An RNA of 207 nucleotides, treated with 2A3 and DMS and read out base by base. Reactivities are given for positions 27 through 156. For DMS the reverse transcriptase was MarathonRT.
[RMDB]
RNA sequence: GGGAACGACUCGAGUAGAGUCGAAAAUACCGUCUUCUCCCCGACGGUUUCAAUCCAUAGCUUCACGUUGUGUAGCGUAGGUGGAAGGUAUCGUGUGGUUUAUAAACACCACAUAGUCUCUUAGGGGUCAAGCUGAUAAACUUCGGUUUAUCAGCAACACUCUCACAACGUUCGCGUUGUGAGAGUGAAAAGAAACAACAACAACAAC
Reactivity to 2A3 in 0.01 (KOAc 150mM, MgCl2 10mM, bicine 150mM(pH8.5), 24C), signal-to-noise 3, nucleotides 027 to 156: u060a000c000c000g000u020c030u280u020c020u080c000c000c000c000g000a010c020g000g000u020u020u060c050a030a030u020c010c010a040u050a110g000c010u040u060c030a030c060g300u300u300g030u060g040u100a020g000c020g090u120a090g020g130u020g020g020a030a020g070g020u100a050u160c050g000u000g000u000g000g130u090u050u030a220u140a070a120a010c070a010c030c000a000c000a000u030a020g030u000c010u010c020u110u190a000g000g000g030g000u050c070a070a030g000c000u000g000a000u000a000a000a000c000u010u060c150g050g010u000u000u000a000u000c000a000g000c000a000a010
Reactivity to DMS in 0.01 (KOAc 150mM, MgCl2 10mM, bicine 150mM(pH8.5), 24C), signal-to-noise 2, nucleotides 027 to 156: u000a100c010c000g000u000c020u000u000c020u010c000c000c040c040g000a050c040g020g010u010u000u000c080a090a160u000c020c010a080u000a190g000c000u000u010c020a050c040g010u000u010g000u010g020u000a020g010c000g020u020a040g010g080u000g000g030a080a060g000g010u000a040u010c080g020u030g000u000g000g040u000u000u010a270u010a150a140a130c150a040c000c000a000c010a030u000a060g010u000c050u000c020u000u000a300g040g010g010g030u000c020a120a140g020c020u000g030a020u000a000a000a010c000u000u000c240g030g000u000u000u000a010u000c000a000g000c010a000a070